[RMDB]
RNA sequence: GGGAACGACUCGAGUAGAGUCGAAAAGAUAUGGAGUCUUCGAUAAGAUGCCAUCGGAAACGAUGGGCAUCUUUUGACGAAGUCUCCUAAGUCAAAACUUGUCUCAUGCUUCGGCAUGAGACAAGAAUCAAGUUCUAAUGUUCGCAUUAGAACUUGAAAAAGAAACAACAACAACAAC
Reactivity to 2A3 in 0.01 (KOAc 150mM, MgCl2 10mM, bicine 150mM(pH8.5), 24C), signal-to-noise 2, nucleotides 027 to 126: g000a010u030a010u080g010g000a000g000u010c000u000u010c010g040a040u030a300a040g010a000u010g040c000c000a000u000c010g010g000a050a020a020c020g000a010u040g050g070g000c010a010u010c010u000u030u020u040g010a010c000g000a010a000g000u000c000u000c000c000u000a050a020g010u020c030a010a020a130a230c000u020u010g010u000c000u000c000a000u000g000c020u100u130c300g160g000c000a010u000g000a000g010a000c000a000a000g000a000a030
Reactivity to DMS in 0.01 (KOAc 150mM, MgCl2 10mM, bicine 150mM(pH8.5), 24C), signal-to-noise 5, nucleotides 027 to 126: g010a030u000a300u010g010g010a020g020u010c000u000u000c000g030a140u000a030a020g000a000u000g010c010c010a020u000c000g010g000a080a030a100c010g020a000u000g020g000g010c000a000u000c000u000u000u010u010g010a220c080g000a020a010g000u000c000u000c000c000u000a010a050g010u020c030a130a070a110a200c000u000u000g000u000c000u000c010a000u000g000c000u000u010c240g030g010c000a000u000g010a000g000a000c000a000a000g000a100a130
The data come from the RNA Mapping Database (RMDB), library TTRDEL. Structure probing data (2A3 and DMS) for a 177-nucleotide construct. For 2A3, 7,512 sequencing reads were counted.